Structure probing data (DMS and 2A3) for a 177-nucleotide construct.
For DMS, 780 sequencing reads were counted.
For 2A3, 1,345 sequencing reads were counted.
DMS adducts were read by reverse transcription with MarathonRT.
For 2A3 the reverse transcriptase was SuperScript II with manganese.
RNA sequence: GGGAACGACUCGAGUAGAGUCGAAAAACUAUGACUGGCCUCCUUACGGGGCUGGCCGACCAGGCACAUUCGGAGACAUUCAAGCUAGGUCAACCAACUAUGUCAAACCCAACGAUCUGUAUGGGGAGUACCGUGAUGUUUUCGAACAUCACGGUACAAAAGAAACAACAACAACAAC
Reactivity to DMS in 0.01 (KOAc 150mM, MgCl2 10mM, bicine 150mM(pH8.5), 24C), signal-to-noise 1, nucleotides 027 to 126: a170c130u010a060u000g010a060c050u010g000g010c010c010u010c000c060u010u010a160c270g020g030g000g000c030u000g020g020c020c000g020a090c040c010a230g000g020c000a070c140a140u000u010c070g000g000a120g020a110c080a070u020u010c060a100a120g000c050u010a140g020g000u010c030a150a040c010c020a070a120c080u000a040u000g020u010c060a030a170a150c010c030c000a040a100c020g000a050u000c120u000g050u000a060u000g010g000g010g010a100
Reactivity to 2A3 in 0.01 (KOAc 150mM, MgCl2 10mM, bicine 150mM(pH8.5), 24C), signal-to-noise 2, nucleotides 027 to 126: a000c100u070a150u250g060a080c030u020g010g040c000c010u000c000c050u100u130a150c200g000g000g000g000c000u000g000g000c000c000g040a040c020c020a000g030g020c010a040c020a140u090u120c120g010g000a050g000a040c040a050u120u070c060a130a010g000c000u060a030g020g030u040c010a020a090c030c000a010a030c060u080a100u220g080u110c050a020a020a140c030c000c010a030a030c040g040a170u070c000u300g060u080a170u080g000g000g030g030a030
Reactivities are rounded to 0.1 and cut off at 0 and 3. In probing experiments dimethyl sulfate is read out at A N1 and C N3, which are open when not base-paired. The reactions ran in a buffer of 150 mM KOAc, 10 mM MgCl2 and 150 mM bicine (pH 8.5), at 24 C.